[RMDB]
RNA sequence: GGGAACGACUCGAGUAGAGUCGAAAAGCUCUGGAAUUGAGGCCCCUCUAACAAUAAUCCAAAACUACUUCGCAGAGUAAUCUCCCGAAUCGUAGGAUGCCCAUUACUAUCUAUUUUUGGAGCAUCUAAAACUGUCAGUGCUUCGGCACUGACAGAAGAGUAAGCAUAAGUUCGCUUAUGCUUACUCAAAAGAAACAACAACAACAAC
Reactivity to 2A3 in 0.01 (KOAc 150mM, MgCl2 10mM, bicine 150mM(pH8.5), 24C), signal-to-noise 3, nucleotides 027 to 156: g010c000u000c010u020g040g040a080a060u050u130g070a080g070g060c020c020c010c000u070c050u090a160a120c110a080a070u210a060a090u080c040c020a020a080a040a020c030u100a040c020u040u050c080g010c160a000g010a000g020u050a100a070u010c050u020c020c000c000g020a050a080u120c090g030u040a080g030g020a010u000g000c000c000c010a010u030u020a040c050u060a060u280c050u080a220u150u070u000u000u010g010g010a100g010c000a000u000c000u020a000a000a000a020c000u000g000u000c000a000g000u000g000c000u000u060c070g020g000c000a000c000u000g010a010c000a000g000a000a000
Reactivity to DMS in 0.01 (KOAc 150mM, MgCl2 10mM, bicine 150mM(pH8.5), 24C), signal-to-noise 2, nucleotides 027 to 156: g010c010u000c000u000g030g000a090a090u000u000g000a120g000g040c020c000c010c060u010c060u000a290a220c040a130a120u020a090a130u000c010c010a040a100a110a140c050u000a110c060u000u000c030g020c050a060g000a070g010u030a080a100u000c110u000c000c000c000g020a090a100u020c050g000u000a240g010g010a080u000g010c010c000c000a080u000u010a060c140u000a170u010c230u000a210u010u010u000u010u010g020g010a170g010c000a000u030c010u000a010a050a110a150c000u000g040u000c000a010g050u000g010c010u000u010c250g040g040c000a020c010u000g000a000c000a000g000a020a120